The record gives the reactivity of an RNA of 307 nucleotides to 2A3 and DMS. Reactivities are given for positions 27 through 266. The data come from the RNA Mapping Database (RMDB), library POS240. For DMS the reverse transcriptase was MarathonRT. 2A3 is a SHAPE reagent: it acylates the 2'-hydroxyl of flexible nucleotides of all four kinds. The reactions ran in a buffer of 150 mM KOAc, 10 mM MgCl2 and 150 mM bicine (pH 8.5), at 24 C. For 2A3 the reverse transcriptase was SuperScript II with manganese. For 2A3, 4,801 sequencing reads were counted. For DMS, 9,867 sequencing reads were counted.

[RMDB]
RNA sequence: GGGAACGACUCGAGUAGAGUCGAAAACAGGCGUUCGCGCCUGAGACGAACGUGAGUUCGUCACUCCACGGUGACGUGGAGAGUGAGAUUGUGAAGGGAUCUCGCAGGUAUCGUGAGGGAAGUAUGGGGUAGUACGAGAGGAACUCCCAUGCCGUGCCUCUAGUUUCUGGGGUUUGUCGAACGGCAAGUGCCCCGAAGCCAUCGCACGGUGGUUCUCGGCUGAACGCCUCUAAGCCAGAAGCCAAUCCCAAGACCAGAUGCCCACUAACGGCGAGUUCGCUCGCCGUAAAAGAAACAACAACAACAAC
Reactivity to 2A3 in 0.01 (KOAc 150mM, MgCl2 10mM, bicine 150mM(pH8.5), 24C), signal-to-noise 4, nucleotides 027 to 266: c010a000g000g000c000g040u070u110c200g020c030g010c080c000u010g010a060g000a000c010g000a000a000c030g080u120g130a060g020u010u000c000g000u000c010a010c010u010c000c000a020c000g020g050u160g050a060c010g010u000g030g010a020g000a000g020u060g010a010g000a050u060u090g050u170g240a100a080g080g070g000a010u000c000u010c020g020c050a020g000g020u020a010u070c020g020u030g030a020g000g010g010a070a030g040u050a020u000g000g010g010g000u000a000g000u010a000c000g010a010g020a050g140g010a010a010c000u030c040c000c010a000u020g010c000c000g000u010g010c000c000u000c000u000a000g000u000u020u080c230u300g010g000g000g020u010u000u010g020u030c090g110a190a120c110g040g010c010a010a020g070u090g270c000c000c000c000g010a000a000g000c010c010a060u190c060g010c010a010c010g000g000u040g010g000u050u010c040u030c060g020g000c020u030g020a160a030c050g060c010c000u020c000u020a010a000g000c000c000a030g030a020a000g040c000c010a020a040u010c010c000c000a010a000g100a030c080c020a040g010a040u040g020c010c030c000a090c060u170a060
Reactivity to DMS in 0.01 (KOAc 150mM, MgCl2 10mM, bicine 150mM(pH8.5), 24C), signal-to-noise 4, nucleotides 027 to 266: c060a010g010g010c000g040u000u020c140g030c020g030c010c000u010g000a080g010a010c000g010a020a000c010g010u030g000a180g000u000u000c000g020u010c000a150c010u000c000c000a020c000g000g010u010g000a170c010g040u000g000g000a020g000a120g010u010g000a030g010a050u010u000g010u010g020a140a100g000g000g000a020u010c000u000c010g010c030a090g010g000u000a030u000c040g010u020g010a130g000g000g010a080a090g020u010a010u000g000g000g000g000u000a050g000u000a110c000g010a240g010a210g030g000a130a100c130u030c000c010c000a020u010g010c000c010g010u000g010c000c020u010c020u000a040g000u000u000u000c010u020g060g000g010g010u000u000u010g000u000c000g000a120a090c190g000g000c000a010a020g000u010g010c000c000c000c000g000a010a000g000c010c020a010u010c230g000c020a020c020g000g000u000g010g010u000u000c070u000c070g020g000c030u000g000a120a100c130g000c030c020u010c040u000a190a100g010c000c010a040g000a080a040g010c000c040a110a110u000c010c000c020a060a240g000a150c120c050a110g010a050u000g000c010c010c190a060c150u000a230